[RMDB]
RNA sequence: GGGAACGACUCGAGUAGAGUCGAAAAGAUAUGGAAGCCACCGACAUGCUCAAAAAGGGUCGGAAACGACCUACAAAGAGCAACAGCGUUGGCUUCCUAAGUCAAAAGCGUGUGUUCGCACACGCAACAUCUUAGACACCUUCGGGUGUCUAAGAUGAAAAGAAACAACAACAACAAC
Reactivity to 2A3 in 0.01 (KOAc 150mM, MgCl2 10mM, bicine 150mM(pH8.5), 24C), signal-to-noise 2, nucleotides 027 to 126: g010a000u030a010u080g020g010a010a000g040c010c000a010c040c000g030a030c170a170u300g000c000u010c020a020a060a000a060a140g090g020g010u020c020g000g000a000a020a000c000g000a000c000c000u010a040c060a000a210a000g010a000g030c060a120a050c070a060g040c010g010u010u010g010g000c030u000u000c000c000u000a010a000g000u000c030a090a020a090a120g000c010g020u010g010u010g040u060u170c300g050c090a010c000a000c000g000c000a000a000
Reactivity to DMS in 0.01 (KOAc 150mM, MgCl2 10mM, bicine 150mM(pH8.5), 24C), signal-to-noise 3, nucleotides 027 to 126: g010a010u000a160u010g000g000a010a020g010c000c010a030c050c000g010a050c060a300u010g010c000u010c000a030a090a110a190a160g000g000g060u000c000g020g000a030a020a070c000g000a000c010c000u000a030c150a070a140a110g000a010g010c000a040a060c300a070g000c040g000u000u000g000g000c000u000u000c000c010u000a000a060g000u000c030a080a060a130a120g000c000g040u010g030u000g010u010u010c240g020c000a010c000a020c000g020c010a080a120